Conditions: 150 mM KOAc, 10 mM MgCl2 and 150 mM bicine (pH 8.5), 24 C. This 207-nucleotide RNA was probed chemically with DMS and 2A3. The 2A3 profile rests on 3,751 reads. As a SHAPE reagent, 2A3 marks flexible, mostly unpaired nucleotides at the ribose 2'-OH. Reactivities are rounded to 0.1 and cut off at 0 and 3.

RNA sequence: GGGAACGACUCGAGUAGAGUCGAAAAGUAUAACCGCUUCGGCGGUUAUACAAAAACCGUAGGAUCGUGACAGCUAGAUUAGUGUUCGAAAGAGCAUGGGAUCUUGGACCUGUACGAUCCUAAACGGAAAAAAGGAUAUGUCUUCGGACAUAUCCAAGUAAUAAUCGGAGUUCGCUCCGAUUAUUACAAAAGAAACAACAACAACAAC
Reactivity to DMS in 0.01 (KOAc 150mM, MgCl2 10mM, bicine 150mM(pH8.5), 24C), signal-to-noise 2, nucleotides 027 to 156: g020u000a020u000a000a000c000c010g020c010u000u000c300g040g000c000g030g060u000u000a000u000a000c000a050a060a040a080a130c000c010g020u010a040g000g000a020u000c010g040u000g030a070c010a070g050c000u000a020g000a010u000u010a300g010u000g010u000u000c010g030a190a130a300g010a020g000c010a020u000g000g050g020a020u000c010u000u010g060g000a020c230c010u010g000u000a060c020g000a020u000c000c000u000a000a030a100c000g030g010a010a020a060a090a130a150g000g020a030u000a000u000g020u000c000u000u000c300g020g020a010c000a020u000a000u000c000c000a000a060
Reactivity to 2A3 in 0.01 (KOAc 150mM, MgCl2 10mM, bicine 150mM(pH8.5), 24C), signal-to-noise 3, nucleotides 027 to 156: g000u000a010u000a010a010c000c010g010c010u050u060c160g110g000c010g000g000u000u000a010u010a000c010a000a000a000a000a030c000c000g010u010a020g000g000a000u010c010g020u050g230a010c000a000g030c030u040a000g000a010u000u020a020g010u000g020u010u010c020g050a140a100a060g010a020g020c010a010u080g110g300g030a010u010c000u050u100g050g070a080c020c000u000g000u010a000c000g000a000u010c000c000u000a000a000a000c020g000g040a020a070a040a020a040a160g000g000a000u010a000u000g000u000c010u010u090c300g080g000a000c000a000u000a000u000c000c000a000a010